[RMDB]
RNA sequence: GGGAACGACUCGAGUAGAGUCGAAAAUGCUUUCACUUACCUCUUCAGUCACUCAAACUAUUAUGCAUUCUUUUCUUUUAUUGAAACUUGAUCAGUUGCCAUUUUCUAGAUAAUGUAGUUAAAAUUUGCAGUUCUCAUGUUCAAUAGAACAUUAUGAGUGCGAAAUUACGUUCGCGUAAUUUCGCACAAAAGAAACAACAACAACAAC
Reactivity to 2A3 in 0.01 (KOAc 150mM, MgCl2 10mM, bicine 150mM(pH8.5), 24C), signal-to-noise 1, nucleotides 027 to 156: u130g000c030u130u070u120c050a030c010u030u180a130c000c000u000c030u060u020c030a080g020u070c070a030c030u070c040a060a100a060c020u080a000u230u020a020u180g040c010a040u110u030c040u000u070u000u070c000u030u080u050u040a040u010u130g060a110a100a110c040u030u110g000a020u010c030a020g000u040u010g010c000c000a020u040u030u000u030c110u040a030g000a080u020a140a080u190g000u020a030g000u020u130a000a050a150a180u070u210u200g040c010a010g000u040u010c070u010c000a020u050g010u040u010c000a000a000u040a200g020a000a060c030a010u080u180a080u300g050a050